Structure probing data (2A3) for a 207-nucleotide construct. Values cover nucleotides 27 to 156. For 2A3, 432 sequencing reads were counted. The data come from the RNA Mapping Database (RMDB), library OK3TST.
[RMDB]
RNA sequence: GGGAACGACUCGAGUAGAGUCGAAAAGGAGGAGAAGAACCAGUGAUCCUGUUAGUGUGCCCAGCAUCCCUCUGCUCAAUAAGGCAAAUGUAGAUGUUCUUUGGAAAUGAUUGCCAGAGCCUACAGUCCUUCAUAAUGUUCAGCUCCAGGUCCUGGAACUGCAUGGGAUGUUCGCAUCCCAUGCAGUAAAAGAAACAACAACAACAAC
Reactivity to 2A3 in 0.01 (KOAc 150mM, MgCl2 10mM, bicine 150mM(pH8.5), 24C), signal-to-noise 1, nucleotides 027 to 156: g050g000a000g000g070a060g030a140a000g030a150a020c000c000a000g030u030g150a160u030c000c010u010g030u000u100a060g030u000g020u050g100c000c000c000a000g000c000a200u150c040c030c010u010c040u030g000c000u020c020a040a170u130a180a040g110g000c020a040a000a070u120g010u020a000g000a000u090g070u130u040c000u040u050u040g040g020a020a190a140u150g170a180u170u210g020c000c000a000g010a040g070c030c000u000a000c000a010g160u230c000c000u000u040c050a100u110a180a030u070g040u060u000c020a050g030c000u050c110c020a000g030g000u080c010c010u000g000g020a010